[RMDB]
RNA sequence: GGGAACGACUCGAGUAGAGUCGAAAAAGGACCGAUGAUGAGAUCUGAUGGUGUCUGAGUGUUUCUCGAUGACAUGAACAGAUAUCUGAGGUCAGGAAAGUUCCUCAAUGCUUCGGCAUUGAGGAACCCGAUAUCUCGUGUUCGCACGAGAUAUCGGAAAAGAAACAACAACAACAAC
Reactivity to 2A3 in 0.01 (KOAc 150mM, MgCl2 10mM, bicine 150mM(pH8.5), 24C), signal-to-noise 2, nucleotides 027 to 126: a000g120g000a020c000c010g050a140u050g010a020u040g040a050g020a110u030c010u020g030a080u220g090g020u010g010u000c050u050g030a020g020u160g280u120u280u090c000u000c020g090a150u300g000a000c000a000u030g050a100a040c010a000g010a030u020a020u020c000u020g040a010g000g010u000c000a010g010g040a080a170a010g000u000u000c000c000u000c010a000a000u000g000c010u030u050c160g070g000c000a000u010u000g000a000g030g010a000a000c000
Reactivity to DMS in 0.01 (KOAc 150mM, MgCl2 10mM, bicine 150mM(pH8.5), 24C), signal-to-noise 2, nucleotides 027 to 126: a110g010g010a040c000c000g000a260u000g000a030u000g030a060g000a100u000c000u000g010a080u000g040g010u000g000u020c000u010g010a090g020u010g010u010u000u000c050u000c010g010a110u000g010a020c010a020u000g000a100a180c010a010g000a010u000a030u000c010u000g000a300g010g010u000c000a080g000g010a090a090a110g010u000u000c000c000u000c000a000a000u000g010c030u010u020c170g040g000c010a010u000u000g000a010g010g010a000a000c000

Structure probing data (2A3 and DMS) for a 177-nucleotide construct.
It was measured as part of the RMDB library RFMREP.
The reactions ran in a buffer of 150 mM KOAc, 10 mM MgCl2 and 150 mM bicine (pH 8.5), at 24 C.